[RMDB]
RNA sequence: GGGAACGACUCGAGUAGAGUCGAAAAGAUAAACGCGCAGUUUGGGCGCAACCUGCGGUCCAUGGGGUGUGCGGGCGAGGUGUCGCUCUUCUGCGGCUGCGAGGCCGGCUUUGACGCCUGCAACAACACCAUAGGUAUAUUUCGAUAUACCUAUGGUAAAAGAAACAACAACAACAAC
Reactivity to DMS in 0.01 (KOAc 150mM, MgCl2 10mM, bicine 150mM(pH8.5), 24C), signal-to-noise 9, nucleotides 027 to 126: g000a160u010a050a100a110c100g010c020g010c010a030g010u000u000u000g000g010g010c020g010c060a040a030c040c010u000g010c020g010g010u000c010c030a100u000g010g010g000g010u000g010u000g010c140g000g000g010c010g010a080g000g010u000g010u000c010g010c020u000c030u000u000c030u000g010c020g010g010c030u000g020c110g010a110g010g010c050c050g000g000c040u000u000u010g010a110c140g010c010c010u000g010c030a080a050c090a050a060c140
Reactivity to 2A3 in 0.01 (KOAc 150mM, MgCl2 10mM, bicine 150mM(pH8.5), 24C), signal-to-noise 9, nucleotides 027 to 126: g060a020u180a050a120a010c060g010c000g000c060a020g030u050u070u090g040g020g010c030g000c020a030a080c030c010u300g300c090g070g020u010c030c020a100u200g030g010g020g050u120g040u080g080c070g010g000g010c010g010a020g000g020u040g040u080c020g000c000u010c000u090u030c020u040g020c000g070g030c020u050g010c030g020a060g080g000c030c030g020g010c030u140u090u150g050a040c080g010c000c000u020g000c010a060a060c010a030a010c010